[RMDB]
RNA sequence: GGGAACGACUCGAGUAGAGUCGAAAAACAUUGUCUAUGUAGGAGAUCCAGCACAGUUGCCAGCUCCUAGGACUUUGUUGACUAGAGGCACAUUGGAACCAGAAAAUUUCAAUAGUGUCACUAGAUUGGACCGCCAUCUUCGGAUGGCGGAAAAGAAACAACAACAACAAC
Reactivity to DMS in 0.01 (KOAc 150mM, MgCl2 10mM, bicine 150mM(pH8.5), 24C), signal-to-noise 2, nucleotides 027 to 129: a000c030a060u000u000g020u000c010u090a150u080g120u030a000g030g000a060g060a000u120c200c140a140g000c040a090c250a140g000u010u020g010c000c090a000g020c060u020c040c000u060a060g010g000a000c040u000u000u000g020u010u030g010a230c000u020a040g000a060g030g020c000a030c060a000u000u030g000g020a000a030c070c070a240g070a030a050a080a110u000u000u000c000a030a030u000a150g000u000g020u020c020a040c000u050a030g010a270u070u060g020g000a100
Reactivity to 2A3 in 0.01 (KOAc 150mM, MgCl2 10mM, bicine 150mM(pH8.5), 24C), signal-to-noise 2, nucleotides 027 to 129: a000c000a010u010u010g010u000c040u100a090u180g250u090a010g010g000a000g000a090u100c110c080a060g000c030a130c050a190g150u250u170g070c000c000a010g030c000u000c010c000u000a030g000g000a000c000u000u020u000g000u000u010g060a000c000u000a000g010a070g050g000c000a000c020a010u010u000g000g000a000a020c050c070a030g220a050a140a040a050u000u000u000c000a000a000u030a080g000u000g000u010c010a020c000u000a000g020a060u040u100g090g050a000

The data come from the RNA Mapping Database (RMDB), library 15KLIB. The record gives the reactivity of an RNA of 170 nucleotides to DMS and 2A3. The reactions ran in a buffer of 150 mM KOAc, 10 mM MgCl2 and 150 mM bicine (pH 8.5), at 24 C. DMS adducts were read by reverse transcription with MarathonRT. The 2A3 profile rests on 3,310 reads.